This 207-nucleotide RNA was probed chemically with 2A3 and DMS. DMS adducts were read by reverse transcription with MarathonRT. Values cover nucleotides 27 to 156. The data come from the RNA Mapping Database (RMDB), library OK3TST.
RNA sequence: GGGAACGACUCGAGUAGAGUCGAAAACACUUCUUCUAAAUUAGCAUCCACUUCUUCCACAUUCCUAUUCAUGUUGAUAUUUUCACCUCCUCUCCUGAGUCACAAAUGUUCUUACUGGCAUCUACAAUGGAAGGUUUUCAGUUUACUUUGCCCAGAACCUAAAUGCACCAUUCGUGGUGCAUUUAGGAAAAGAAACAACAACAACAAC
Reactivity to 2A3 in 0.01 (KOAc 150mM, MgCl2 10mM, bicine 150mM(pH8.5), 24C), signal-to-noise 3, nucleotides 027 to 156: c050a010c010u050u060c020u080u050c050u110a140a170a150u090u090a060g040c010a060u030c010c010a030c010u040u010c000u050u000c040c020a090c020a140u040u050c020c010u120a160u100u110c060a030u120g070u080u020g110a070u030a110u110u080u060u030c020a050c020c000u030c010c000u030c000u030c020c010u040g020a000g050u010c030a020c000a090a100a080u050g030u100u070c010u050u070a070c050u030g010g040c040a040u010c030u080a050c060a060a140u120g040g020a040a030g050g010u020u000u020u030c010a000g000u020u030u000a090c030u030u080u090g030c030c010c040a040g120a060a060
Reactivity to DMS in 0.01 (KOAc 150mM, MgCl2 10mM, bicine 150mM(pH8.5), 24C), signal-to-noise 2, nucleotides 027 to 156: c050a090c050u000u020c020u000u010c050u020a100a060a140u010u000a100g050c030a110u010c010c020a070c040u000u000c040u010u000c000c020a110c100a120u000u000c010c010u000a100u000u000c100a110u010g030u000u000g030a130u020a080u000u010u000u000c030a050c020c010u000c050c010u000c010u010c010c070u000g040a110g020u000c040a080c080a060a040a060u000g030u010u010c030u000u000a100c070u000g010g050c080a080u000c020u000a050c060a090a050u000g020g020a110a090g050g000u010u000u000u010c000a050g020u000u000u000a050c060u000u000u000g000c020c010c010a160g030a090a210